[RMDB]
An RNA of 177 nucleotides, treated with 2A3 and DMS and read out base by base. The reactions ran in a buffer of 150 mM KOAc, 10 mM MgCl2 and 150 mM bicine (pH 8.5), at 24 C. For DMS the reverse transcriptase was MarathonRT.
RNA sequence: GGGAACGACUCGAGUAGAGUCGAAAAUUUAUAUGAUUCGUUCUUGAGACACCACUUUCUUAUGACUGUGUUUCUAACUUACUUUGUGUGAGGACAUCGGUAGAUGGGCAGUUCGGCUGGGGCGGCAAAAACAUGGAGCUUUCGAGCUCCAUGUUUUAAAAGAAACAACAACAACAAC
Reactivity to 2A3 in 0.01 (KOAc 150mM, MgCl2 10mM, bicine 150mM(pH8.5), 24C), signal-to-noise 2, nucleotides 027 to 126: u080u080u040a270u000a060u140g070a040u000u040c080g040u060u030c030u000u050g070a040g000a050c000a030c040c010a070c030u030u120u010c020u060u100a050u270g010a010c000u000g000u010g000u080u010u000c060u070a090a030c000u070u060a070c040u030u190u170g060u030g000u050g000a100g050g000a010c000a040u030c040g040g010u110a130g020a040u140g050g080g000c000a030g010u050u070c050g040g000c030u040g000g000g050g000c030g000g000c000a000
Reactivity to DMS in 0.01 (KOAc 150mM, MgCl2 10mM, bicine 150mM(pH8.5), 24C), signal-to-noise 2, nucleotides 027 to 126: u020u050u120a130u020a040u050g000a090u010u020c010g000u000u000c060u010u000g000a100g010a090c040a080c050c110a090c030u000u040u010c000u000u010a150u010g000a040c070u000g050u000g010u000u000u000c020u000a140a130c050u030u010a010c040u010u000u040g000u050g010u020g000a060g020g010a080c050a030u000c060g000g000u000a020g020a070u020g000g000g000c030a070g010u000u000c090g010g060c010u000g010g000g020g020c010g000g000c110a020
Source information:
The 2A3 profile rests on 797 reads. Source: RMDB library RFM100, as collected in RNAgym. Values cover nucleotides 27 to 126. For 2A3 the reverse transcriptase was SuperScript II with manganese.